[RMDB]
RNA sequence: GGGAACGACUCGAGUAGAGUCGAAAAGCCACCGCGCCUGGCCGGAACUUGCUUCUUGAAAACAAAUGUGGCACACUAGUAUCUCUGACCACAGAAAGAGAAGAAGCCAUUGUUAUUCUUGUUGAUGAUGGCGACAGUAAUGACAUGGUAAAAGUUACGUAAUUAAUAGCUUCGGCUAUUAAUUACGAAAAGAAACAACAACAACAAC
Reactivity to 2A3 in 0.01 (KOAc 150mM, MgCl2 10mM, bicine 150mM(pH8.5), 24C), signal-to-noise 4, nucleotides 027 to 156: g020c000c010a030c030c020g050c040g010c010c060u080g060g020c040c020g040g040a040a050c040u050u090g020c000u010u020c010u030u080g060a070a050a040a070c090a060a100a110u060g010u000g010g030c030a010c010a010c130u090a090g110u110a230u110c070u000c020u110g110a230c010c020a020c010a030g050a030a100a000g050a000g000a050a010g030a040a010g000c000c020a020u060u130g020u010u030a040u050u000c060u060u070g020u050u020g030a120u030g020a050u070g150g030c000g020a000c000a010g040u120a050a010u010g000a010c010a010u020g010g000u080a150a110a010a010g030u080u110a030
Reactivity to DMS in 0.01 (KOAc 150mM, MgCl2 10mM, bicine 150mM(pH8.5), 24C), signal-to-noise 2, nucleotides 027 to 156: g030c010c030a060c060c020g010c070g020c000c080u000g050g000c030c000g040g000a060a100c040u000u000g020c000u000u000c030u000u020g010a130a080a100a220c100a110a130a200u010g040u000g000g060c020a190c050a030c010u000a100g000u000a100u000c000u000c010u000g010a060c000c000a050c040a110g000a100a050a210g000a130g020a090a130g000a110a280g010c030c030a030u000u000g010u000u000a030u000u000c070u000u010g030u000u000g010a150u020g010a080u010g020g010c000g000a050c030a040g000u010a020a060u000g010a030c030a050u010g020g000u020a060a020a060a120g000u000u000a130
Record summary: Source: RMDB library OK3TST, as collected in RNAgym. Structure probing data (2A3 and DMS) for a 207-nucleotide construct. DMS adducts were read by reverse transcription with MarathonRT.